Chemical mapping of a 177-nucleotide RNA with DMS and 2A3. DMS (dimethyl sulfate) methylates the pairing face of unpaired adenines and cytosines. The DMS profile rests on 4,221 reads. Conditions: 150 mM KOAc, 10 mM MgCl2 and 150 mM bicine (pH 8.5), 24 C. The 2A3 profile rests on 2,678 reads. For DMS the reverse transcriptase was MarathonRT.
[RMDB]
RNA sequence: GGGAACGACUCGAGUAGAGUCGAAAAGGGUGUUGGCACAGGCCAUAUCUAGAACGGACUGAUGUGCUAAGGGAAGGAGUUCAACUUAAUGCUAGAGGGUUUGAACCUCCUUCAUACAACAGGGGAGAGUUAGUACUAGCUUCGGCUAGUACUAACUAAAAGAAACAACAACAACAAC
Reactivity to DMS in 0.01 (KOAc 150mM, MgCl2 10mM, bicine 150mM(pH8.5), 24C), signal-to-noise 4, nucleotides 027 to 126: g000g000g040u000g010u000u010g000g030c030a060c040a120g000g000c010c020a070u000a060u020c150u020a140g020a110a140c190g000g010a080c060u000g010a110u000g030u000g010c020u010a080a100g000g010g000a030a000g000g010a050g010u000u000c010a010a030c030u000u000a100a160u010g010c200u010a070g020a160g010g000g000u000u010u010g020a020a010c130c050u000c000c000u000u000c020a040u010a080c080a070a070c070a100g000g000g000g020a190g000
Reactivity to 2A3 in 0.01 (KOAc 150mM, MgCl2 10mM, bicine 150mM(pH8.5), 24C), signal-to-noise 3, nucleotides 027 to 126: g000g030g000u130g030u110u080g050g010c010a000c020a040g010g070c000c020a060u070a070u140c110u070a080g040a210a040c080g000g100a020c010u080g070a180u040g080u010g030c020u030a000a050g120g020g010a010a010g000g000a010g000u020u010c000a020a000c000u030u080a130a070u180g150c060u080a040g030a100g090g060g020u110u090u170g000a000a000c000c000u000c000c000u000u000c000a000u080a050c020a050a010c000a020g000g010g000g000a160g010